RNA sequence: GGGAACGACUCGAGUAGAGUCGAAAAACGCUUCACAAUGUGCGGCAAAGAAACAUUGUUUAUGCAAAGGCACUUCGCAAUGUGUGCUCAAACAUUGCUUAUUCAAACACGCUUCACAACGUGCGACAAAACUUCACGGUCUUCGGACCGUGAAGAACCCUACACAAAUGUUCGCAUUUGUGUAGGGAAAAGAAACAACAACAACAAC
Reactivity to 2A3 in 0.01 (KOAc 150mM, MgCl2 10mM, bicine 150mM(pH8.5), 24C), signal-to-noise 9, nucleotides 027 to 156: a000c010g000c010u000u000c010a000c000a010a000u010g010u000g000c010g060g050c150a190a080a050g110a020a070a000c010a010u010u000g110u050u100u110a110u130g050c050a040a070a100g190g000c010a000c010u010u020c030g000c010a010a010u010g010u000g050u010g030c110u130c230a040a050a000c010a010u010u010g010c010u080u130a180u130u160c060a020a070a040c010a000c020g040c020u140u140c100a030c020a160a040c020g010u020g030c020g050a030c070a020a100a060a050c000u000u000c000a000c000g010g000u000c000u010u030c030g080g010a000c000c000g000u000g000a000a000g000a000a000
Reactivity to DMS in 0.01 (KOAc 150mM, MgCl2 10mM, bicine 150mM(pH8.5), 24C), signal-to-noise 2, nucleotides 027 to 156: a020c010g040c000u010u000c030a070c000a010a030u020g070u000g030c020g040g010c040a140a060a040g040a080a020a010c010a020u010u010g020u000u010u010a090u010g010c060a060a200a090g000g010c010a020c000u000u000c120g040c090a080a110u010g020u000g020u000g030c030u000c040a060a160a060c070a030u000u010g000c010u000u000a090u020u000c090a120a170a070c000a030c010g000c030u000u010c300a150c040a040a030c020g010u000g010c010g000a180c120a040a070a060a110c000u010u000c000a010c010g000g010u000c000u000u000c300g030g000a030c000c000g030u000g000a000a010g000a040a060